About this RNA: An RNA of 177 nucleotides, treated with 2A3 and DMS and read out base by base. For 2A3, 1,883 sequencing reads were counted. In probing experiments dimethyl sulfate is read out at A N1 and C N3, which are open when not base-paired. Conditions: 150 mM KOAc, 10 mM MgCl2 and 150 mM bicine (pH 8.5), 24 C. For 2A3 the reverse transcriptase was SuperScript II with manganese.

RNA sequence: GGGAACGACUCGAGUAGAGUCGAAAAGAUAUGGAUCUGAAUGUUCAUCGAUCUACAUGUCGGAAACGACAUAAGUAGGGAGAACAGCAGAUCCUAAGUCAAAGAGCAAGCCUUCGGGCUUGCUCAAGGAUUAAGGGAGGUUCGCCUCCCUUAAUCCAAAAGAAACAACAACAACAAC
Reactivity to 2A3 in 0.01 (KOAc 150mM, MgCl2 10mM, bicine 150mM(pH8.5), 24C), signal-to-noise 1, nucleotides 027 to 126: g000a010u030a000u080g030g000a010u010c020u020g050a300a300u030g130u010u000c050a300u300c040g000a010u000c000u000a000c020a000u040g000u030c030g000g040a010a010a010c020g000a000c000a000u070a080a190g000u000a000g030g000g000a130g000a020a000c000a020g020c000a020g000a000u040c000c000u000a000a000g000u000c010a190a150a110g030a010g000c020a000a000g000c000c010u140u200c300g110g000g000c000u000u000g000c000u000c000a000a000
Reactivity to DMS in 0.01 (KOAc 150mM, MgCl2 10mM, bicine 150mM(pH8.5), 24C), signal-to-noise 1, nucleotides 027 to 126: g000a040u000a110u030g000g010a030u000c000u000g000a300a090u000g010u000u050c000a300u020c220g010a050u010c000u000a010c020a040u020g000u000c000g010g000a060a010a050c000g010a010c000a000u010a040a130g040u000a000g020g000g010a000g000a010a010c010a010g000c000a000g000a010u000c010c010u000a000a070g000u000c010a100a130a190g010a030g000c000a020a030g010c000c010u000u020c200g050g020g050c000u000u000g000c000u010c000a050a030